[RMDB]
RNA sequence: GGGAACGACUCGAGUAGAGUCGAAAAUUCUAAGCAUGUGCAGUUACAAGGCAUCCCAUAAAUGGUGGUAGAGAUACAAAGUGACUCUUAUUAGGUCCUUCUUAAGUACUCGUGUGGAAUGACUACACAAUGAGACACAUAUGAAGGGUUCCAAUGAAUUAUACUCGCUAUUCGUAGCGAGUAUAAUAAAAGAAACAACAACAACAAC
Reactivity to 2A3 in 0.01 (KOAc 150mM, MgCl2 10mM, bicine 150mM(pH8.5), 24C), signal-to-noise 5, nucleotides 027 to 156: u060u040c020u070a050a030g020c030a040u090g010u040g060c030a030g020u130u100a050c010a070a050g050g000c000a050u040c020c010c000a040u090a040a100a030u110g050g020u020g000g020u040a020g010a000g010a050u060a170c080a060a110a000g060u050g060a030c020u030c020u140u060a060u090u060a100g010g020u020c000c000u000u030c010u040u060a120a030g000u040a110c010u000c040g000u030g000u020g030g060a170a230u200g070a140c030u060a010c020a000c000a040a160u170g000a000g000a010c020a000c010a070u080a040u100g010a010a010g030g000g000u070u040c010c000a020a080u100g030a030
Reactivity to DMS in 0.01 (KOAc 150mM, MgCl2 10mM, bicine 150mM(pH8.5), 24C), signal-to-noise 4, nucleotides 027 to 156: u000u000c050u000a070a120g030c040a050u000g020u000g020c000a070g030u010u000a070c040a070a150g020g010c040a110u000c000c020c020a130u010a080a080a120u010g010g020u000g020g010u010a070g010a090g000a140u000a130c120a070a070a130g040u000g010a070c050u000c050u000u000a100u010u000a040g020g010u010c010c010u000u000c020u000u020a050a120g030u000a100c020u000c010g020u010g040u000g000g010a170a130u000g020a180c020u000a040c010a020c040a040a070u000g010a070g030a110c040a050c070a110u010a060u000g010a070a040g010g010g020u000u000c020c030a030a100u000g000a120